[RMDB]
RNA sequence: GGGAACGACUCGAGUAGAGUCGAAAAGGCAAUCUAUAAAGAAAAGAGUUUUAAUUGGCUCAUGGUUCCACAGACUGUAUAGGAAGCAUGAUGCUGGCAUCUGCUUGGCUUCUGGGGAGGCCUCAGGAAACUUACAAUUAUGGUGGAAGACAAAGGGUCACGGUUAAGAUUUCGAUCUUAACCGUGAAAAAGAAACAACAACAACAAC
Reactivity to 2A3 in 0.01 (KOAc 150mM, MgCl2 10mM, bicine 150mM(pH8.5), 24C), signal-to-noise 1, nucleotides 027 to 156: g010g000c000a100a000u050c060u210a080u160a240a100a050g130a070a110a060a000g040a000g000u140u190u030u190a150a130u120u160g000g000c000u000c000a040u000g120g040u000u040c010c000a000c020a010g150a050c130u140g040u150a150u080a090g060g000a020a020g100c000a000u020g020a020u140g000c040u040g000g000c040a000u020c060u070g010c020u040u040g040g000c000u010u040c040u130g000g080g000g000a030g000g010c000c030u040c000a030g000g120a030a030a030c070u210u140a000c070a130a140u160u140a040u150g000g040u030g010g000a020a130g030a050c090a020a130a100g100g000g020